[RMDB]
RNA sequence: GGGAACGACUCGAGUAGAGUCGAAAAAAUUGCACAAAGCGUGCAACCUAAGUCGGACAAGGUUCAUCAUUACUACCAAGCUAUUUGAUCAAUAGAGCCUUCUGGUUUUAUGGAUGACUUACCAUCACCGCAGGUGUAUAUUCGUAUACACCUGCGGAAAAGAAACAACAACAACAAC
Reactivity to 2A3 in 0.01 (KOAc 150mM, MgCl2 10mM, bicine 150mM(pH8.5), 24C), signal-to-noise 2, nucleotides 027 to 126: a000a010u080u010g000c020a010c020a080a250a040g150c110g060u010g010c000a010a030c000c000u040a060a060g140u130c130g000g000a110c040a070a040g020g000u130u020c000a010u000c000a010u040u160a040c020u020a030c030c010a020a010g030c030u020a080u080u070u180g050a080u130c030a060a080u050a090g050a010g150c010c000u110u120c070u090g010g000u040u030u030u050a070u190g050g000a010u000g020a010c000u030u020a030c010c010a080u110c070a000
Reactivity to DMS in 0.01 (KOAc 150mM, MgCl2 10mM, bicine 150mM(pH8.5), 24C), signal-to-noise 3, nucleotides 027 to 126: a080a150u010u000g010c030a040c020a150a050a130g000c190g000u010g000c000a020a040c040c020u000a040a100g000u000c120g010g000a130c170a060a080g010g000u010u000c010a020u010c020a040u000u010a020c040u000a050c060c020a060a110g000c070u010a010u010u000u000g020a150u020c140a060a020u000a020g020a090g000c110c070u000u010c130u000g010g000u010u000u000u000a050u000g010g010a030u010g000a040c110u010u010a090c050c020a200u000c190a150